Chemical mapping of a 207-nucleotide RNA with DMS and 2A3.
DMS (dimethyl sulfate) methylates the pairing face of unpaired adenines and cytosines.
DMS adducts were read by reverse transcription with MarathonRT.
For DMS, 2,759 sequencing reads were counted.
As a SHAPE reagent, 2A3 marks flexible, mostly unpaired nucleotides at the ribose 2'-OH.
The RNA was probed in 150 mM KOAc, 10 mM MgCl2 and 150 mM bicine (pH 8.5) at 24 C.
RNA sequence: GGGAACGACUCGAGUAGAGUCGAAAAUUAACACCAGAUGGAAGCCACCAAGGCUUAGGGCUUGUACUCUUCUGAAGCAAUGGCCCAAGCUAUACCUUGGCUCAUUUUAGCCAUGGCUGGAGUUGGAACAGCCACAAUGAAGGGUGCCAUUUCUGGAUACUCGUAUCGAUUUCGAUCGAUACGAGUAAAAAGAAACAACAACAACAAC
Reactivity to DMS in 0.01 (KOAc 150mM, MgCl2 10mM, bicine 150mM(pH8.5), 24C), signal-to-noise 2, nucleotides 027 to 156: u000u000a110a070c050a300c020c040a050g000a120u010g030g000a130a110g040c030c030a070c070c120a060a170g000g010c010u000u000a020g030g020g040c030u000u000g030u000a000c010u000c020u010u000c070u010g000a120a080g020c040a080a130u000g010g000c060c030c000a010a070g020c020u000a150u000a080c030c030u000u000g030g010c030u000c060a090u000u000u030u000a050g000c000c010a070u000g000g020c000u000g030g000a130g030u030u000g010g010a130a160c050a060g040c060c010a040c030a080a170u010g030a090a030g010g000g030u000g000c000c070a220u000u000u030c010u020g000g010a300
Reactivity to 2A3 in 0.01 (KOAc 150mM, MgCl2 10mM, bicine 150mM(pH8.5), 24C), signal-to-noise 2, nucleotides 027 to 156: u100u050a010a020c040a040c050c010a010g000a020u050g110g030a010a010g000c010c020a100c060c100a180a140g010g010c000u000u040a100g020g030g020c050u050u080g020u140a040c000u040c040u220u060c070u140g080a090a000g030c060a040a060u100g050g000c000c000c020a020a000g020c030u090a070u120a280c030c020u020u020g000g000c010u010c010a080u050u100u040u230a020g000c000c000a040u020g030g000c000u020g040g030a150g040u070u080g050g100a060a000c010a010g010c010c020a040c040a040a070u220g010a050a030g000g000g000u000g020c000c020a110u030u030u010c010u000g030g000a030